This 177-nucleotide RNA was probed chemically with DMS and 2A3. It was measured as part of the RMDB library OK1LIB. The reactions ran in a buffer of 150 mM KOAc, 10 mM MgCl2 and 150 mM bicine (pH 8.5), at 24 C. For DMS, 3,414 sequencing reads were counted. DMS adducts were read by reverse transcription with MarathonRT. 2A3 adducts were read by reverse transcription with SuperScript II with manganese. For 2A3, 1,065 sequencing reads were counted.
RNA sequence: GGGAACGACUCGAGUAGAGUCGAAAAGCUCUAGGAGACUAGAGCGAUACGUUAGAGAGCUCGUGGCUUGACUAACGGAUAGCCAGGUACGAGGUUGCCAGAGGACAUAGCUAUAGCUAUGUCCAAAGAGCUAUGUUACGUUCGCGUAACAUAGCUCAAAAGAAACAACAACAACAAC
Reactivity to DMS in 0.01 (KOAc 150mM, MgCl2 10mM, bicine 150mM(pH8.5), 24C), signal-to-noise 3, nucleotides 027 to 126: g000c000u000c010u000a000g000g000a230g000a210c020u000a000g000a010g010c000g000a050u020a030c030g020u000u000a000g000a300g000a030g000c000u000c060g000u060g030g050c000u000u000g010a180c020u000a030a050c070g000g000a050u010a030g000c010c000a160g000g000u010a050c160g010a080g000g020u010u000g000c030c070a120g000a200g000g020a000c000a000u010a000g000c000u000a080u070a110g010c000u000a000u000g000u010c000c000a000a040a070
Reactivity to 2A3 in 0.01 (KOAc 150mM, MgCl2 10mM, bicine 150mM(pH8.5), 24C), signal-to-noise 2, nucleotides 027 to 126: g000c000u000c000u000a000g040g010a070g050a100c000u000a000g000a000g000c000g000a000u000a000c020g010u050u050a000g020a000g000a000g050c010u010c150g160u170g090g000c010u020u010g090a280c000u010a020a000c000g020g060a040u030a000g040c000c000a030g040g010u050a030c110g060a060g090g100u050u100g040c040c000a030g000a050g050g000a000c000a010u020a000g020c040u110a010u080a300g000c000u000a000u030g000u000c000c000a000a000a000